[RMDB]
RNA sequence: GGGAACGACUCGAGUAGAGUCGAAAAGCGAAUAUGAUUUUAAUAAAGCAGCAAAAGGGAUUGAUCCUCAGUAUCAGCAGGCGCUGAAUGCUGAAGCCUGCCUGCAGCUGGAGCCGGCGCUCAAACAGCCGUAGUGCUGGUUCGCCAGCACUACGGCAAAAGAAACAACAACAACAAC
Reactivity to 2A3 in 0.01 (KOAc 150mM, MgCl2 10mM, bicine 150mM(pH8.5), 24C), signal-to-noise 1, nucleotides 027 to 126: g100c000g060a220a020u260a050u270g140a240u250u120u120u010a200a150u110a000a090a000g000c110a050g000c000a060a060a060a060g060g000g030a050u140u270g000a020u070c020c000u000c000a000g000u060a020u090c000a080g000c000a000g300g000c010g000c060u050g200a020a050u050g000c030u020g040a020a030g000c020c000u060g020c000c000u080g060c050a000g000c000u090g090g000a000g100c000c000g000g070c030g000c000u000c020a080a090a120c020a000
An RNA of 177 nucleotides, treated with 2A3 and read out base by base. Source: RMDB library OK1LIB, as collected in RNAgym.